Chemical mapping of a 177-nucleotide RNA with DMS. Values cover nucleotides 27 to 126. The RNA was probed in 150 mM KOAc, 10 mM MgCl2 and 150 mM bicine (pH 8.5) at 24 C. The DMS profile rests on 1,362 reads.
RNA sequence: GGGAACGACUCGAGUAGAGUCGAAAAGAUAUGGAGCUACGGGAGUAAUUGCGAACGUAUCACGAAGCAAUCGGAAACGAUUGCUUCGUGAAGUUCGGCAAUUACGAAGAACGUAGCUCCUAAGUCAGAAACAGUUCUUGUUCGCAAGAACUGUUUCAAAAGAAACAACAACAACAAC
Reactivity to DMS in 0.01 (KOAc 150mM, MgCl2 10mM, bicine 150mM(pH8.5), 24C), signal-to-noise 1, nucleotides 027 to 126: g000a060u010a300u010g000g000a000g020c000u000a000c010g000g000g000a080g020u000a000a000u000u000g020c000g000a000a010c000g010u010a120u000c000a010c000g000a020a050g000c000a000a000u030c000g010g000a190a140a240c000g000a010u000u000g020c000u000u010c000g010u000g020a000a050g000u000u000c000g020g040c030a000a000u020u000a010c000g000a090a090g000a110a220c000g010u000a020g000c000u000c000c020u000a020a100g020u000c110a110